[RMDB]
RNA sequence: GGGAACGACUCGAGUAGAGUCGAAAACCUGGGGGGCGAGAGUCCACGGAAAGUGCCGCAGAAAAGAUACCGCCGACCCCGUCCUCGGACGGGAGGUAAGGGUGAAAUGGUGCGGUAAGAGCGCACCAAGAUUUAUGCACUUCGGUGCAUAAAUCUUAAAAGAAACAACAACAACAAC
Reactivity to 2A3 in 0.01 (KOAc 150mM, MgCl2 10mM, bicine 150mM(pH8.5), 24C), signal-to-noise 2, nucleotides 027 to 126: c010c000u060g020g020g000g000g000g000c020g010a080g010a030g080u050c030c010a020c030g010g060a160a050a020g060u060g050c000c020g020c060a010g040a020a000a000a030g180a000u020a000c000c000g010c000c000g010a030c000c000c000c000g000u000c000c010u050c040g070g000a010c010g000g000g010a010g000g000u000a010a010g010g000g000u020g000a020a010a010u070g000g000u000g000c000g000g000u000a000a000g000a000g010c000g000c000a000c000c000
Reactivity to DMS in 0.01 (KOAc 150mM, MgCl2 10mM, bicine 150mM(pH8.5), 24C), signal-to-noise 5, nucleotides 027 to 126: c010c010u010g000g020g010g000g020g000c040g000a100g000a170g000u000c050c040a100c060g000g000a080a090a080g010u010g000c070c050g010c100a020g000a020a020a020a060g020a030u010a020c010c010g000c000c000g000a190c110c010c000c010g000u000c000c020u060c300g010g000a020c000g020g000g010a010g000g010u000a010a020g000g000g000u000g010a070a040a020u030g010g000u000g010c000g000g010u000a020a020g000a300g010c000g000c000a020c010c010
An RNA of 177 nucleotides, treated with 2A3 and DMS and read out base by base. For 2A3, 4,412 sequencing reads were counted.